Source information:
This 177-nucleotide RNA was probed chemically with DMS. The RNA was probed in 150 mM KOAc, 10 mM MgCl2 and 150 mM bicine (pH 8.5) at 24 C. DMS adducts were read by reverse transcription with MarathonRT. Reactivities are given for positions 27 through 126. For DMS, 3,878 sequencing reads were counted. Source: RMDB library TTRDEL, as collected in RNAgym.
RNA sequence: GGGAACGACUCGAGUAGAGUCGAAAAGAUAUGGAUAGCGGGAGCUUACAAUCGGAAACGAUUGCGAGCUUUGAUCGCUGAUCCUAAGUCAAAGCGUGAGUGCCUACUUCGGUAGGCACUCACGCAAGUAUACCAUCUACUUCGGUAGAUGGUAUACAAAAGAAACAACAACAACAAC
Reactivity to DMS in 0.01 (KOAc 150mM, MgCl2 10mM, bicine 150mM(pH8.5), 24C), signal-to-noise 2, nucleotides 027 to 126: g010a050u000a300u010g000g010a010u000a030g010c000g000g000g010a000g010c000u000u000a050c000a000a010u000c000g010g000a120a070a170c000g020a000u000u000g010c010g000a000g000c000u000u010u010g010a080u000c000g010c000u000g010a010u000c000c000u000a040a140g010u000c040a090a090a160g000c010g010u020g000a020g030u000g010c000c000u000a000c000u000u010c180g020g020u000a010g010g020c000a000c000u000c010a010c000g030c000a000a020